[RMDB]
RNA sequence: GGGAACGACUCGAGUAGAGUCGAAAACUACAUAAAUUCGUUUAUGUAGCAUCGGGGACGCGCAGACUCCCCGUCAGACGGCUCUACCCUUCCAAGCUCUGCACUCAACAGCUUUCGAGCUGUUGAAGAAUAGCCCUGAUUUCGAUCAGGGCUAUUCAAAAGAAACAACAACAACAAC
Reactivity to DMS in 0.01 (KOAc 150mM, MgCl2 10mM, bicine 150mM(pH8.5), 24C), signal-to-noise 2, nucleotides 027 to 126: c000u000a020c010a000u000a020a020a020u000u010c240g020u010u000u000a000u000g010u000a000g010c060a070u000c010g030g000g020g010a020c120g040c160g020c020a020g010a090c100u010c010c010c000c000g000u000c130a140g010a170c060g020g000c010u010c020u010a040c010c020c020u000u030c120c050a090a120g000c070u000c000u010g000c020a180c150u020c000a010a000c000a000g010c000u000u000u010c210g010a010g040c000u010g000u010u010g000a020a060
Reactivity to 2A3 in 0.01 (KOAc 150mM, MgCl2 10mM, bicine 150mM(pH8.5), 24C), signal-to-noise 2, nucleotides 027 to 126: c000u010a000c000a020u030a020a030a040u100u060c100g050u050u010u000a000u010g000u000a010g000c030a080u140c000g000g010g010g000a000c040g130c020g000c200a000g020a100c000u010c000c010c000c000g010u010c000a040g020a030c010g010g000c010u020c000u010a030c020c020c020u120u030c030c030a000a050g000c020u000c010u020g020c000a020c060u000c000a000a010c010a000g020c010u060u060u240c250g050a010g000c000u000g000u010u000g000a020a010